Chemical mapping of a 207-nucleotide RNA with 2A3. Conditions: 150 mM KOAc, 10 mM MgCl2 and 150 mM bicine (pH 8.5), 24 C. Source: RMDB library OK3TST, as collected in RNAgym. The 2A3 profile rests on 530 reads.

[RMDB]
RNA sequence: GGGAACGACUCGAGUAGAGUCGAAAAGAUAGAGAUUGAGAUUCUCUAUGAGACGAUAUAUAGUAAUGAAGAGAGUUCUUACACAUAUCACUGUCGUACAUACAGGUACGAAAUACGUAACCGGUGCUGUAACAUUCUGAUUUAAGAAGCCAUAGCACUGUAGGUUGCGUUUCGACGCAACCUACAGAAAAGAAACAACAACAACAAC
Reactivity to 2A3 in 0.01 (KOAc 150mM, MgCl2 10mM, bicine 150mM(pH8.5), 24C), signal-to-noise 1, nucleotides 027 to 156: g000a020u010a000g010a000g000a000u000u200g050a090g010a220u210u000c030u070c000u000a020u070g110a090g000a020c040g010a000u000a000u010a000u000a120g050u070a040a070u300g010a030a030g100a010g020a080g170u040u010c000u000u030a000c060a000c030a080u030a030u080c050a000c110u060g000u050c000g020u050a020c010a060u160a030c010a070g000g020u020a000c030g050a030a020a110u130a040c040g020u040a010a070c020c030g000g000u020g030c050u000g010u050a020a020c000a020u040u030c010u020g170a200u060u140u190a090a030g070a040a050g020c020c050a090u050a010g000c000a000